The record gives the reactivity of an RNA of 177 nucleotides to 2A3. Source: RMDB library OK1LIB, as collected in RNAgym. The reactions ran in a buffer of 150 mM KOAc, 10 mM MgCl2 and 150 mM bicine (pH 8.5), at 24 C. For 2A3, 690 sequencing reads were counted. Reactivities are given for positions 27 through 126.
RNA sequence: GGGAACGACUCGAGUAGAGUCGAAAAGACCGACGUGAGCACGGUCAGGAUGGAGGUCCGGAUUCAUCCAAGUUCACGAGGUGAUCGAAAACGAGUUCACGAUUACCAAACCGGACAAGAACUCAAAGGGUAGCAAGUAGUUCGCUACUUGCUACCCAAAAGAAACAACAACAACAAC
Reactivity to 2A3 in 0.01 (KOAc 150mM, MgCl2 10mM, bicine 150mM(pH8.5), 24C), signal-to-noise 1, nucleotides 027 to 126: g080a000c000c000g080a100c030g260u200g030a040g000c150a120c300g080g000u030c070a000g000g000a000u000g030g010a000g010g020u000c040c000g000g000a030u100u000c000a000u000c000c000a020a050g040u120u080c080a030c080g020a030g070g000u050g000a010u030c030g150a000a000a000a300c150g000a000g030u090u090c030a030c010g050a030u030u040a010c000c000a030a030a030c020c000g000g000a000c000a020a040g060a000a000c000u000c010a000a050a050